[RMDB]
Record summary:
This 207-nucleotide RNA was probed chemically with 2A3 and DMS. For DMS, 2,081 sequencing reads were counted.
RNA sequence: GGGAACGACUCGAGUAGAGUCGAAAAGCGUUGUACGCUGGGAUAGGAAGGAGCUAACUUGGAGAAUACCUGAAGCGCGCACGGGUAUUCGUUGAAGAGUUAGGCUCCGCUAUCCUGUGCUGAAGCGCGCACGGCAACCGAAAGGUGCGAGCACACCCCAACGAUAUGACUUCGGUCAUAUCGUUGGAAAAGAAACAACAACAACAAC
Reactivity to 2A3 in 0.01 (KOAc 150mM, MgCl2 10mM, bicine 150mM(pH8.5), 24C), signal-to-noise 3, nucleotides 027 to 156: g040c020g010u060u050g060u170a050c030g010c030u050g020g000g000a010u000a000g150g250a300a140g000g000a010g010c000u010a000a010c010u000u000g030g000a020g000a010a000u000a000c000c000u020g030a140a030g000c000g000c010g000c030a010c010g000g000g000u010a020u000u000c000g040u070u010g000a000a000g010a010g010u000u020a040g040g030c000u000c000c020g000c000u000a000u000c000c000u010g020u010g000c000u010g010a120a040g000c010g000c010g000c000a010c010g010g000c010a020a040c020c020g020a060a040a030g010g000u030g010c040g070a070g030c060a030c010a030c090c000
Reactivity to DMS in 0.01 (KOAc 150mM, MgCl2 10mM, bicine 150mM(pH8.5), 24C), signal-to-noise 1, nucleotides 027 to 156: g020c040g010u000u010g020u030a100c100g110c010u010g000g000g000a040u000a020g040g020a070a050g000g000a070g020c000u010a040a010c000u000u010g000g000a070g020a020a060u000a000c010c030u000g020a070a030g020c080g060c040g000c010a300c020g000g010g030u000a010u010u010c000g000u020u010g000a300a300g000a020g010u000u000a030g050g000c010u000c000c000g030c040u010a000u000c030c020u000g000u010g010c000u000g040a040a090g020c030g040c020g000c020a290c030g010g000c000a070a120c060c000g010a130a090a140g000g040u000g030c010g000a210g010c060a170c060a040c040c000

Reactivities are given for positions 27 through 156.